[RMDB]
RNA sequence: GGGAACGACUCGAGUAGAGUCGAAAAUAGGAGCGCACUGGAAUGUGACGUAUCUGAUGAUGGUGGUGAAGACGAUAGCGACGAUGAUGGGUCUACGCCAUCGGAUGUAAUUGAAUUUCGGGAUUCCGUCCUAGGGUCAGUUCGCUGACCCUAGGACAAAAGAAACAACAACAACAAC
Reactivity to 2A3 in 0.01 (KOAc 150mM, MgCl2 10mM, bicine 150mM(pH8.5), 24C), signal-to-noise 1, nucleotides 027 to 126: u080a000g000g000a000g010c000g000c000a000c000u020g290g040a150a000u160g090u000g050a190c000g000u070a300u090c000u050g140a190u240g000a000u050g300g000u030g000g000u010g150a030a000g000a070c030g190a190u030a140g000c020g050a050c010g070a080u260g000a180u160g180g000g000u080c000u000a110c000g020c000c000a000u000c000g000g000a030u160g080u200a200a000u080u000g230a030a140u000u000u150c000g020g020g240a030u000u000c000c000

Source: RMDB library OK1LIB, as collected in RNAgym. Chemical mapping of a 177-nucleotide RNA with 2A3. For 2A3, 422 sequencing reads were counted. The RNA was probed in 150 mM KOAc, 10 mM MgCl2 and 150 mM bicine (pH 8.5) at 24 C. High 2A3 reactivity points to a flexible backbone, as in loops and unpaired stretches. 2A3 adducts were read by reverse transcription with SuperScript II with manganese.